[RMDB]
RNA sequence: GGGAACGACUCGAGUAGAGUCGAAAACACCGCCCGUCGUUGUUUCCGAUGAUGGUGCAAUACAGGUGAUCGGACAGGCGGUGUUUUAUCCGCCCGAAAGUUCACCGAUAUUUCUUCAAUAGAGGAAGCAAAAGUCGUAACAAGGUAGCUGUAGGUGCAUAUCGGGUAACUUCGGUUACCCGAUAUGAAAAGAAACAACAACAACAAC
Reactivity to 2A3 in 0.01 (KOAc 150mM, MgCl2 10mM, bicine 150mM(pH8.5), 24C), signal-to-noise 2, nucleotides 027 to 156: c080a010c000c100g050c030c020c020g120u070c020g040u010u060g010u010u040u010c010c040g000a040u060g010a080u050g040g020u050g040c030a000a080u110a040c060a050g010g010u000g010a000u030c030g090g020a010c000a010g020g000c000g000g000u000g000u020u000u000u030a000u010c000c010g010c000c000c000g030a080a030a010g020u040u040c020a010c020c000g000a000u020a110u090u040u000c030u060u030c000a060a080u070a070g040a110g050g170a090a000g020c020a000a030a030a090g110u170c070g070u140a040a040c010a010a050g070g000u020a010g010c010u000g020u030a010g000g050u040g050
Reactivity to DMS in 0.01 (KOAc 150mM, MgCl2 10mM, bicine 150mM(pH8.5), 24C), signal-to-noise 2, nucleotides 027 to 156: c070a060c000c040g000c030c000c090g040u000c000g040u000u010g020u010u010u010c020c010g010a130u000g010a260u000g030g040u010g010c030a070a080u000a110c060a110g020g010u010g020a010u000c030g020g010a300c050a010g040g000c000g060g020u000g020u000u000u000u000a030u010c000c010g020c000c010c010g000a060a160a270g000u000u000c000a030c000c000g010a120u000a070u000u000u010c040u000u000c000a100a290u000a140g000a180g000g020a020a060g030c040a070a050a060a150g000u000c060g010u000a040a080c030a050a080g000g000u000a050g040c010u000g030u000a040g000g010u000g010